[RMDB]
RNA sequence: GGGAACGACUCGAGUAGAGUCGAAAAGAUAUGGACCUGACCCAGCGAAACUGAGCGUUGAAACCGUGGAUAUUCGGAAACGAAUAUCCACGGUGGAGCUCACCGAGUAGCUGCAGGUCCUAAGUCACACUAGCUUGAUCUUCGGAUCAAGCUAGUGAAAAGAAACAACAACAACAAC
Reactivity to DMS in 0.01 (KOAc 150mM, MgCl2 10mM, bicine 150mM(pH8.5), 24C), signal-to-noise 1, nucleotides 027 to 126: g010a110u040a300u010g030g010a040c000c000u000g000a220c260c290c100a020g010c010g010a260a250a190c040u000g000a020g030c000g010u040u000g000a270a230a100c000c000g030u000g000g000a030u000a000u000u000c000g000g000a080a050a300c000g000a000a010u000a010u000c000c000a000c000g010g000u000g000g000a120g020c000u000c000a000c100c000g030a060g010u000a100g000c000u000g020c010a000g000g000u000c000c000u000a010a060g000u000c010a200

Conditions: 150 mM KOAc, 10 mM MgCl2 and 150 mM bicine (pH 8.5), 24 C. An RNA of 177 nucleotides, treated with DMS and read out base by base. Source: RMDB library TTRINS, as collected in RNAgym.